[RMDB]
RNA sequence: GGGAACGACUCGAGUAGAGUCGAAAAUGUCAGUUCGCUGACAAUGACGCGUACUACGCUAGCUUUGAUCUACGGUGGGAGACAGCUCCCAAAUAGGAGCUGUCGAAGAACACCAGUAGGGAGCUAGCGUAUCGCAAGAGAGGGGGUUCGCCCCCAAAUGUAACGAUAUCUUCGGAUAUCGUUACAUAAAAGAAACAACAACAACAAC
Reactivity to DMS in 0.01 (KOAc 150mM, MgCl2 10mM, bicine 150mM(pH8.5), 24C), signal-to-noise 3, nucleotides 027 to 156: u000g010u000c000a030g020u000u000c300g040c010u010g010a030c000a070a110u010g030a110c170g000c020g040u000a070c120u000a020c000g020c020u000a020g010c010u000u000u010g020a050u020c000u000a000c010g000g030u000g010g010g010a300g010a030c020a020g000c010u000c000c000c020a010a100a120u000a040g020g040a000g040c010u000g020u000c000g000a050a080g000a100a200c000a020c000c000a060g020u000a010g010g010g000a020g040c010u000a000g020c010g000u000a000u010c010g020c010a170a110g000a190g010a180g000g020g030g020g010u000u000c080g020c010c000c010c010c010a000a010
Reactivity to 2A3 in 0.01 (KOAc 150mM, MgCl2 10mM, bicine 150mM(pH8.5), 24C), signal-to-noise 3, nucleotides 027 to 156: u060g000u000c000a000g030u100u110c120g070c080u010g000a000c080a000a100u210g130a160c190g000c000g020u050a170c070u000a000c030g010c000u000a000g000c010u150u130u090g120a150u150c000u000a000c010g000g060u000g000g010g010a050g020a000c000a000g000c020u040c040c000c040a060a160a050u240a010g000g000a000g000c000u000g000u000c000g000a000a010g000a010a000c000a010c010c050a040g000u000a000g000g000g020a000g010c000u000a010g050c010g000u020a000u020c000g010c000a050a000g120a010g050a040g000g000g040g000g000u080u110c220g130c000c000c000c000c030a050a030
This 207-nucleotide RNA was probed chemically with DMS and 2A3.
Source: RMDB library RNAMAK, as collected in RNAgym.
Conditions: 150 mM KOAc, 10 mM MgCl2 and 150 mM bicine (pH 8.5), 24 C.
The DMS profile rests on 6,680 reads.
For DMS the reverse transcriptase was MarathonRT.